[RMDB]
RNA sequence: GGGAACGACUCGAGUAGAGUCGAAAAGUAUGGAUGCCACCGUGACGGCUCAAUCACACAAGUGCCAACGAUAACGAGGCGCUCGCUAUUGCAGCGUAACUGACGGCCUGACGGUCUGACGUUACAAAAAACGAAAAGUGGUUCGCCACUUUUCGAAGAGCAUACUAGGCUUCGGCCUAGUAUGCUCAAAAGAAACAACAACAACAAC
Reactivity to 2A3 in 0.01 (KOAc 150mM, MgCl2 10mM, bicine 150mM(pH8.5), 24C), signal-to-noise 2, nucleotides 027 to 156: g130u130a100u160g060g000a040u040g090c010c000a060c020c100g030u040g100a060c030g010g030c070u080c070a120a090u190c040a020c020a040c020a110a120g000u010g050c000c070a120a100c060g050a090u200a110a090c100g010a110g010g000c000g040c020u020c000g000c030u030a040u140u300g030c090a070g000c000g050u000a010a010c000u010g000a000c000g050g020c000c020u130g080a050c070g030g010u040c030u000g010a010c000g020u050u040a000c050a000a120a000a000a000a000c020g070a010a000a010a020g000u020g030g030u010u000c160g060c020c000a000c030u000u000u000u000c000g000a000a000

Structure probing data (2A3) for a 207-nucleotide construct. The reactions ran in a buffer of 150 mM KOAc, 10 mM MgCl2 and 150 mM bicine (pH 8.5), at 24 C. Source: RMDB library M2RFPK, as collected in RNAgym. Reactivities are given for positions 27 through 156.